The record gives the reactivity of an RNA of 177 nucleotides to 2A3. For 2A3 the reverse transcriptase was SuperScript II with manganese. The 2A3 profile rests on 1,968 reads. High 2A3 reactivity points to a flexible backbone, as in loops and unpaired stretches. Reactivities are given for positions 27 through 126. Conditions: 150 mM KOAc, 10 mM MgCl2 and 150 mM bicine (pH 8.5), 24 C.
[RMDB]
RNA sequence: GGGAACGACUCGAGUAGAGUCGAAAAGCAAUCAACUUCGGUUGAUUGCAAAGAAAGCACGAAUAAAUAAAGGGAAAAUAAUAAUCGUGCAACCAAAUAAAAAAAUCUGAGACUUCGGUCUCAGAAAGAAUUACCACUAGUUCGCUAGUGGUAAUUCAAAAGAAACAACAACAACAAC
Reactivity to 2A3 in 0.01 (KOAc 150mM, MgCl2 10mM, bicine 150mM(pH8.5), 24C), signal-to-noise 2, nucleotides 027 to 126: g000c000a010a020u010c000a000a020c000u030u030c110g060g000u000u010g020a000u000u000g000c000a000a000a000g010a020a080a010g000c000a000c000g000a060a030u130a230a120a030u190a150a150a030g060g040g040a150a110a020a020u110a050a100u080a080a070u060c000g020u000g000c000a000a020c020c000a020a080a010u270a080a130a040a010a010a010a050u040c000u000g010a000g000a000c020u040u080c270g110g000u000c000u000c000a010g000a000a010a000